The data come from the RNA Mapping Database (RMDB), libraries RFM100 and RFMREP. Chemical mapping of a 177-nucleotide RNA with DMS and 2A3. Values cover nucleotides 27 to 126. The RNA was probed in 150 mM KOAc, 10 mM MgCl2 and 150 mM bicine (pH 8.5) at 24 C.
RNA sequence: GGGAACGACUCGAGUAGAGUCGAAAAACGUCGCAGUACGCUGCGACGAAGGCGAUGAAGAAAAUUUCGCUAGCUGAAAAGUGAUGAGUACCCUCGCAACUGAGCAGCCUCGGCUACGGCCGAGGCAGAAUUUACUACUGUUCGCAGUAGUAAAUUCAAAAGAAACAACAACAACAAC
Reactivity to DMS in 0.01 (KOAc 150mM, MgCl2 10mM, bicine 150mM(pH8.5), 24C), signal-to-noise 4, nucleotides 027 to 126: a100c020g000u000c010g000c010a010g000u030a130c270g030c010u010g000c000g000a010c000g010a020a040g000g010c010g000a030u020g010a100a080g030a080a090a110a110u000u000u010c000g020c010u000a140g040c050u000g000a070a080a140a100g000u030g000a100u010g000a090g000u010a130c040c010c010u000c040g010c060a070a100c110u010g010a120g020c060a070g000c000c010u010c000g000g000c000u000a060c230g020g010c010c030g010a000g010g020c020a000
Reactivity to 2A3 in 0.01 (KOAc 150mM, MgCl2 10mM, bicine 150mM(pH8.5), 24C), signal-to-noise 6, nucleotides 027 to 126: a000c010g000u000c000g000c000a000g010u060a020c250g030c120u010g000c000g000a000c000g010a020a000g020g000c020g020a010u100g090a090a230g140a130a150a090a100u030u090u010c000g000c020u020a040g010c050u060g070a040a060a020a050g080u080g060a090u060g010a020g100u160a150c000c030c000u030c020g020c010a040a190c100u130g070a090g090c050a010g000c000c000u000c000g000g000c000u020a050c190g090g000c020c000g000a000g000g000c000a000